[RMDB]
RNA sequence: GGGAACGACUCGAGUAGAGUCGAAAACGUACGUGGAGACACGUACGACGUGACUUCGGUCACGAAUCGAGGCAACUCCUGCGCCUCUCGCGCGAGGCGUCGGUGGUCGGCGAGCCCACGGACGCAAAAACUCGCGCGUAUAUAACUAGCAGGAGAAUGCGUGGAUAAUAUUCGUAUUAUCCACGCAAAAAGAAACAACAACAACAAC
Reactivity to 2A3 in 0.01 (KOAc 150mM, MgCl2 10mM, bicine 150mM(pH8.5), 24C), signal-to-noise 3, nucleotides 027 to 156: c010g000u000a010c000g000u000g010g010a050g010a010c000a000c000g010u010a010c010g010a000c000g000u000g000a000c000u030u020c290g140g000u000c020a010c000g030a020a140u160c090g000a000g000g000c020a120a250c100u010c010c000u000g000c000g000c000c010u020c060u030c010g000c000g020c000g000a010g010g030c000g020u010c080g140g000u020g010g010u030c050g000g090c200g060a030g010c010c000c000a000c000g110g000a000c000g000c000a020a110a110a030a090c000u000c000g000c000g000c000g000u000a000u000a000u000a030a120c170u110a020g000c000a000g000g000a000g000a000a030
Reactivity to DMS in 0.01 (KOAc 150mM, MgCl2 10mM, bicine 150mM(pH8.5), 24C), signal-to-noise 2, nucleotides 027 to 156: c030g000u020a030c000g080u000g000g020a300g000a230c010a040c020g000u010a020c000g000a070c020g030u000g030a040c010u010u010c270g030g010u000c050a010c010g010a090a060u020c050g000a070g010g030c020a130a090c000u000c000c000u010g010c000g030c030c030u000c010u010c010g090c030g040c000g010a040g040g010c040g020u000c020g010g030u000g050g060u010c030g020g000c120g030a300g000c180c000c000a030c040g010g010a010c000g000c140a090a030a120a100a250c040u000c030g020c000g050c030g000u000a010u000a050u000a100a120c110u000a100g070c000a010g000g000a020g010a090a060

Record summary
Structure probing data (2A3 and DMS) for a 207-nucleotide construct. It was measured as part of the RMDB library OK3TST. The RNA was probed in 150 mM KOAc, 10 mM MgCl2 and 150 mM bicine (pH 8.5) at 24 C.